[RMDB]
RNA sequence: GGGAACGACUCGAGUAGAGUCGAAAAUGUAGUCUCACAGUGAUACGAGCAGUUAUACGCAUGGGAUAAAAUAACAUUGGGCCACUGUAAAUUGAGAUGAAGUAACCAUUUUCAUCUCUUCUGCAGGCGGAGAUGCUUGUUUCGACAAGCAUCUCCGAAAAGAAACAACAACAACAAC
Reactivity to 2A3 in 0.01 (KOAc 150mM, MgCl2 10mM, bicine 150mM(pH8.5), 24C), signal-to-noise 2, nucleotides 027 to 126: u030g000u030a060g010u010c000u000c000a030c000a030g060u080g000a090u090a070c040g110a080g090c140a000g090u210u110a040u180a240c000g030c000a060u110g020g020g020a060u040a110a130a000a140u100a000a120c000a140u010u170g010g030g110c010c000a000c070u010g000u050a170a170a300u110u180g000a000g000a000u000g000a000a000g030u010a110a000c060c030a030u190u000u000u000c000a000u050c000u000c070u100u000c050u010g040c020a020g040g030
Source: RMDB library RFM100, as collected in RNAgym. The record gives the reactivity of an RNA of 177 nucleotides to 2A3. The 2A3 profile rests on 543 reads.